RNA sequence: GGGAACGACUCGAGUAGAGUCGAAAAUAACAAUGAAGUUUGAGGAUUGGUCUGUGUAAGUAUGGCAGAAGUGAUGUUAAGUCGCUUAUGAGAUUAGGGUAUAAAAGACUAAGGCUUCCAUGCUUCCAUCUUGGUCUCUGUCUCUCAGAGAACAGUAAGGUAUCCUAGUAUUCGUACUAGGAUACCUAAAAGAAACAACAACAACAAC
Reactivity to DMS in 0.01 (KOAc 150mM, MgCl2 10mM, bicine 150mM(pH8.5), 24C), signal-to-noise 3, nucleotides 027 to 156: u010a090a150c070a090a150u000g030a090a110g020u000u000u010g010a090g030g010a130u000u010g020g020u000c020u000g030u000g040u000a030a100g000u010a040u010g020g000c030a110g000a060a110g040u010g010a040u010g030u010u000a110a220g040u010c020g000c020u000u000a080u000g000a090g010a120u000u000a090g000g030g010u000a130u000a070a060a090a120g010a050c070u000a040a050g030g000c010u000u010c000c040a120u000g000c010u010u000c040c020a090u000c040u000u000g010g010u000c010u000c000u000g000u000c110u000c110u010c050a090g010a100g010a020a070c030a050g000u010a110
Reactivity to 2A3 in 0.01 (KOAc 150mM, MgCl2 10mM, bicine 150mM(pH8.5), 24C), signal-to-noise 6, nucleotides 027 to 156: u060a030a020c050a040a080u200g030a080a040g070u070u150u140g040a050g020g020a050u050u070g020g030u040c030u040g020u020g030u040a040a040g010u020a030u090g050g000c040a020g010a170a010g020u010g040a040u060g030u170u160a130a080g000u020c000g000c010u070u060a070u160g040a060g000a060u040u110a080g020g000g080u110a080u040a100a140a020a010g030a010c030u030a050a010g070g010c010u090u030c030c010a020u040g000c020u040u010c030c020a080u050c060u060u080g050g000u020c010u010c010u010g050u050c040u010c000u020c110a010g000a020g030a100a040c010a050g090u180a060
Chemical mapping of a 207-nucleotide RNA with DMS and 2A3. It was measured as part of the RMDB library OK3TST. 2A3 adducts were read by reverse transcription with SuperScript II with manganese. The reactions ran in a buffer of 150 mM KOAc, 10 mM MgCl2 and 150 mM bicine (pH 8.5), at 24 C. For DMS the reverse transcriptase was MarathonRT.